[RMDB]
RNA sequence: GGGAACGACUCGAGUAGAGUCGAAAACAUCGCGACUUCGGUCGCGAUGAAAGUUGUGCUCCCUCACGCAUAACAAAUCGCAAUGAGGGUAGGUGACUGCAAAACGACACGCCUUCGGGCGUGUCAAUUCUAGCGAUAUUUUCGAAUAUCGCUAGAAAAAAGAAACAACAACAACAAC
Reactivity to DMS in 0.01 (KOAc 150mM, MgCl2 10mM, bicine 150mM(pH8.5), 24C), signal-to-noise 5, nucleotides 027 to 126: c000a020u000c010g010c010g010a010c000u000u010c190g020g010u000c010g030c000g010a000u000g010a050a070a040g010u000u000g010u000g010c030u000c000c000c000u000c000a060c250g010c010a100u000a080a150c270a060a090a090u000c170g000c030a080a120u000g010a020g000g000g000u000a010g010g000u010g010a050c010u010g000c170a090a070a090a090c190g010a010c000a000c000g000c000c010u010u000c200g030g010g000c000g000u010g000u000c010a020a030
Reactivity to 2A3 in 0.01 (KOAc 150mM, MgCl2 10mM, bicine 150mM(pH8.5), 24C), signal-to-noise 1, nucleotides 027 to 126: c010a000u000c020g020c000g020a010c010u070u000c170g220g000u000c030g010c000g010a000u000g030a000a020a000g030u010u020g040u060g060c010u030c000c000c000u010c000a010c020g040c000a020u170a260a160c060a050a090a050u220c130g030c060a000a130u240g000a010g000g060g030u090a010g040g060u090g020a020c020u040g000c030a060a060a090a010c070g000a010c000a000c020g010c030c000u050u060c300g000g000g000c000g000u000g000u020c000a000a000
The record gives the reactivity of an RNA of 177 nucleotides to DMS and 2A3. For 2A3, 1,027 sequencing reads were counted. The DMS profile rests on 5,617 reads. Values cover nucleotides 27 to 126. Conditions: 150 mM KOAc, 10 mM MgCl2 and 150 mM bicine (pH 8.5), 24 C. DMS adducts were read by reverse transcription with MarathonRT.